Notes:
The data come from the RNA Mapping Database (RMDB), library 15KLIB. The record gives the reactivity of an RNA of 170 nucleotides to DMS and 2A3. The reactions ran in a buffer of 150 mM KOAc, 10 mM MgCl2 and 150 mM bicine (pH 8.5), at 24 C. DMS adducts were read by reverse transcription with MarathonRT.
RNA sequence: GGGAACGACUCGAGUAGAGUCGAAAAAGCCCGCCUCUCCUCGUCGGUGAAGUCUCCCGCGCGGGUCCUCUUCCUAGGUCCGGAAUCAACCUCCAUCUGAUCUGUCCGGAGCUUUUUCGGCGGAGGAAUCGUCCCACGUUCGCGUGGGACAAAAGAAACAACAACAACAAC
Reactivity to DMS in 0.01 (KOAc 150mM, MgCl2 10mM, bicine 150mM(pH8.5), 24C), signal-to-noise 2, nucleotides 027 to 129: a010g000c000c000c000g000c030c070u010c000u000c000c000u030c010g110u030c050g000g000u000g040a070a140g010u020c040u010c020c000c000g040c100g030c060g020g030g000u010c020c020u010c020u010u030c010c030u030a010g000g050u020c010c000g030g010a080a030u050c000a080a130c110c070u070c070c050a140u100c160u020g030a000u010c060u030g030u050c030c010g040g030a060g000c090u020u030u040u050u140c020g020g050c000g020g030a040g000g080a060a020u070c070
Reactivity to 2A3 in 0.01 (KOAc 150mM, MgCl2 10mM, bicine 150mM(pH8.5), 24C), signal-to-noise 5, nucleotides 027 to 129: a000g070c000c000c000g000c000c010u030c010u010c000c000u020c010g180u030c070g190g000u010g040a020a010g050u020c010u040c020c000c000g020c010g000c020g010g020g010u020c000c000u000c010u020u020c000c000u010a040g010g070u030c020c000g000g010a010a040u090c020a040a100c020c040u080c040c010a090u060c080u100g050a020u030c030u090g110u000c010c000g020g000a040g000c030u080u040u000u060u120c040g010g010c020g020g030a020g010g000a010a060u090c060